Structure probing data (2A3 and DMS) for a 177-nucleotide construct.
RNA sequence: GGGAACGACUCGAGUAGAGUCGAAAAGAUAUGGAGUAUUCACUCCGAUAAGAUGUGUAUCGGAAACGAUACCAUCUUUUGACGGAGGAAUACUCCUAAGUCAAACCACAAGCUUCGGCUUGUGGAAGUUGUAUAUCAUGUUCGCAUGAUAUACAACAAAAGAAACAACAACAACAAC
Reactivity to 2A3 in 0.01 (KOAc 150mM, MgCl2 10mM, bicine 150mM(pH8.5), 24C), signal-to-noise 9, nucleotides 027 to 126: g010a000u030a020u070g000g000a000g040u010a010u000u060c200a280c300u010c010c030g010a090u180a150a000g000a000u010g300u020g000u080a000u000c000g000g000a020a010a010c010g000a000u000a000c000c000a000u000c000u010u030u050u110g300a160c040g000g000a000g000g000a000a000u000a000c000u000c000c000u000a010a000g000u000c000a020a040a120c000c000a000c000a000a000g010c010u090u300c300g180g000c000u000u010g000u000g010g010a020a030
Reactivity to DMS in 0.01 (KOAc 150mM, MgCl2 10mM, bicine 150mM(pH8.5), 24C), signal-to-noise 8, nucleotides 027 to 126: g000a020u010a140u010g000g010a020g020u000a000u000u000c010a190c000u000c000c000g030a090u020a010a010g010a010u000g000u010g020u000a000u000c000g020g000a050a030a070c010g010a010u000a000c000c000a000u000c000u000u000u010u010g020a170c120g010g000a020g010g000a020a010u000a010c000u000c000c000u000a000a060g000u000c010a160a180a300c000c000a010c000a010a000g000c000u000u010c280g030g010c000u010u000g010u000g000g010a020a040

Values cover nucleotides 27 to 126.